RNA sequence: GGGAACGACUCGAGUAGAGUCGAAAAAACUAGUUCGCUAGUUCGCUCGCGUACUACCGAGCGGGUCCGAGGAUCUAUGUGGAAGCCUAGUCCCAAAUAGGACUAGGCGCACAUAGGGAGGACAGCUCGGUAUCGCUACGUCUGCAUUCGUGCAGAAAGCUAUGAAUUUUUUCGAAAAUUCAUAGCUAAAAGAAACAACAACAACAAC
Reactivity to 2A3 in 0.01 (KOAc 150mM, MgCl2 10mM, bicine 150mM(pH8.5), 24C), signal-to-noise 5, nucleotides 027 to 156: a010a010c030u040a030g030u100u050c230g010c110u000a000g000u040u040c100g060c060u050c050g020c010g010u050a060c020u000a000c020c000g000a010g010c050g200g120g010u000c010c000g010a210g010g010a010u000c000u000a000u000g040u030g080g090a290a030g000c000c000u000a000g000u010c010c010c000a140a300a130u220a100g000g000a000c000u000a000g000g000c000g030c000a000c000a000u000a010g000g000g000a010g000g010a000c000a010g000c000u000c000g000g000u000a000u020c010g000c010u030a030c050g070u010c000u010g000c000a030u030u080c160g120u050g000c000a010g000a080a020
Reactivity to DMS in 0.01 (KOAc 150mM, MgCl2 10mM, bicine 150mM(pH8.5), 24C), signal-to-noise 2, nucleotides 027 to 156: a020a040c040u000a040g010u010u010c220g010c020u000a060g010u000u000c040g010c080u010c040g030c030g020u000a120c120u000a010c000c010g000a020g020c000g000g020g040u000c000c020g010a070g020g010a070u000c010u000a010u010g030u010g000g010a180a140g030c000c000u000a010g000u000c010c000c010a040a140a230u010a060g010g020a020c000u000a000g060g090c000g010c000a000c010a010u000a010g010g020g010a060g010g020a030c000a090g020c010u010c000g000g010u000a000u000c030g020c060u010a030c020g010u000c010u000g000c000a100u000u010c260g010u010g010c020a040g000a050a200

An RNA of 207 nucleotides, treated with 2A3 and DMS and read out base by base. For 2A3 the reverse transcriptase was SuperScript II with manganese. The reactions ran in a buffer of 150 mM KOAc, 10 mM MgCl2 and 150 mM bicine (pH 8.5), at 24 C. The DMS profile rests on 7,521 reads. DMS adducts were read by reverse transcription with MarathonRT.